[RMDB]
RNA sequence: GGGAACGACUCGAGUAGAGUCGAAAAUUGAGCCUGUUUCAGUGGUGGAAAAAACACAUUCUGGAUUGUAUGCAUGCCAGGCAGUAACAUAUCCAGAGCUUCUGGAAUCAUUUCAUACAAUUUCCAUUAUGGGAUAGAAGCUUUGAGAUUAGCAUUACAGUGAUAGGGGAUUCGUCCCCUAUCACUGAAAAGAAACAACAACAACAAC
Reactivity to DMS in 0.01 (KOAc 150mM, MgCl2 10mM, bicine 150mM(pH8.5), 24C), signal-to-noise 1, nucleotides 027 to 156: u000u020g030a130g000c020c010u000g040u000u020u020c010a090g030u000g020g020u010g020g010a000a060a070a110a090a120c050a070c030a140u000u000c070u000g060g010a040u000u000g010u000a080u000g010c120a090u000g040c080c050a140g010g030c130a170g010u010a130a110c000a080u000a120u000c000c020a050g010a090g040c080u010u000c010u000g030g010a030a050u010c130a080u000u000u020c040a160u090a080c030a050a230u000u000u000c000c040a210u000u010a130u000g010g010g010a050u000a050g010a070a020g010c000u000u010u000g010a150g000a080u000u000a170g000c010a040u000u000a240
Reactivity to 2A3 in 0.01 (KOAc 150mM, MgCl2 10mM, bicine 150mM(pH8.5), 24C), signal-to-noise 2, nucleotides 027 to 156: u050u060g030a000g000c000c000u010g050u060u070u070c040a040g020u040g060g010u080g040g030a050a060a000a040a040a110c100a020c050a130u050u030c010u030g020g020a030u050u040g050u080a060u070g050c100a000u050g020c080c010a040g030g000c020a000g090u060a070a010c000a060u120a030u130c020c020a020g000a010g010c010u020u040c010u020g070g090a090a080u140c070a060u080u180u050c020a010u100a090c040a140a190u070u060u080c020c020a020u060u140a060u170g040g020g000a010u040a090g020a010a010g010c000u040u010u020g130a220g000a010u070u040a020g000c070a020u130u210a110
Chemical mapping of a 207-nucleotide RNA with DMS and 2A3. For DMS, 1,858 sequencing reads were counted. It was measured as part of the RMDB library OK3TST. DMS adducts were read by reverse transcription with MarathonRT. Conditions: 150 mM KOAc, 10 mM MgCl2 and 150 mM bicine (pH 8.5), 24 C.